[RMDB]
RNA sequence: GGGAACGACUCGAGUAGAGUCGAAAAGAUUGGCUCCUUAAACCACCCACAAGGCACCAGCUCUGGGAGAAGCUGCAGGGAGAAGAGAACAAAGCCCUCGCUGUGAUCAGGAUGGGUGUCUCAUACCUUUUCUCUGGGGUCAUUCCAGGUAUGAGACACAUCAGAGUCGAUUCGUCGACUCUGAUGUAAAAGAAACAACAACAACAAC
Reactivity to DMS in 0.01 (KOAc 150mM, MgCl2 10mM, bicine 150mM(pH8.5), 24C), signal-to-noise 1, nucleotides 027 to 156: g010a090u000u010g030g020c010u000c000c020u000u000a060a080a070c030c040a110c020c000c010a270c120a090a150g030g000c030a090c100c030a100g020c020u010c070u000g010g020g020a140g000a150a080g030c040u000g010c050a110g000g000g000a120g000a050a110g010a120g030a070a120c090a050a100a150g020c030c010c030u000c050g020c060u010g030u000g010a130u000c090a030g000g000a070u020g000g000g010u000g020u000c010u000c010a000u000a010c010c000u000u000u000u000c000u000c060u020g000g020g020g010u000c020a050u000u000c010c050a000g000g020u000a010u000g020a030g000a030c040
Reactivity to 2A3 in 0.01 (KOAc 150mM, MgCl2 10mM, bicine 150mM(pH8.5), 24C), signal-to-noise 4, nucleotides 027 to 156: g070a050u080u090g020g010c010u000c030c020u080u100a140a130a100c030c020a040c020c020c010a050c060a080a080g070g000c040a050c050c020a020g020c050u020c020u090g040g020g000a060g010a060a020g020c040u050g000c060a030g030g030g020a050g000a080a030g010a020g020a110a030c050a120a090a020g040c000c040c010u030c030g190c050u050g040u120g110a130u210c020a020g060g030a060u120g010g030g030u040g000u020c010u000c000a000u010a000c010c000u040u110u150u080c090u040c040u060g030g010g000g050u070c020a060u160u030c070c050a000g000g000u000a000u010g000a000g000a000c010
An RNA of 207 nucleotides, treated with DMS and 2A3 and read out base by base. For 2A3 the reverse transcriptase was SuperScript II with manganese.